RNA sequence: GGGAACGACUCGAGUAGAGUCGAAAACUCGCUCAAACAUACAGAGAUGUUGUGCGAAAUGAAUCUCUCUGCAUUAGAAUGGUCGAAGAAUCAGCGGCGAUUCGAGACCGAAUUAGAAGCCGCAUUAACAGCUUUGGAACACGCCUUGCUGACGUGACAUGGUAAUUUAGUUCGCUAAAUUACCAUGAAAAGAAACAACAACAACAAC
Reactivity to DMS in 0.01 (KOAc 150mM, MgCl2 10mM, bicine 150mM(pH8.5), 24C), signal-to-noise 4, nucleotides 027 to 156: c040u000c030g020c050u000c040a090a090a140c090a170u000a120c010a060g000a050g010a030u010g030u000u010g020u000g020c050g000a110a130a170u020g000a100a020u000c150u000c020u000c020u000g020c020a090u010u020a120g020a150a130u000g030g000u000c010g010a210a220g010a040a060u010c020a090g020c090g010g030c060g010a050u000u000c000g000a300g010a150c030c020g000a030a060u010u000a140g010a070a090g000c030c000g000c050a170u020u000a070a080c050a050g020c020u000u000u000g010g010a140a150c050a050c010g000c010c050u000u000g020c120u000g010a070c020g020u010g010a260
Reactivity to 2A3 in 0.01 (KOAc 150mM, MgCl2 10mM, bicine 150mM(pH8.5), 24C), signal-to-noise 7, nucleotides 027 to 156: c010u000c000g000c010u040c050a140a060a070c010a030u150a050c070a040g090a000g010a090u020g000u020u020g030u010g000c020g030a030a060a100u210g040a080a120u050c050u000c010u000c030u130g060c050a130u080u100a100g120a270a130u160g010g010u000c010g010a070a010g000a020a020u020c020a030g000c010g010g000c010g000a010u000u000c000g000a000g000a020c010c000g020a010a020u120u070a040g070a140a010g010c000c000g020c020a010u080u130a070a040c020a010g040c050u090u220u280g060g030a080a030c030a010c030g010c010c000u020u050g000c020u040g010a030c030g020u010g010a020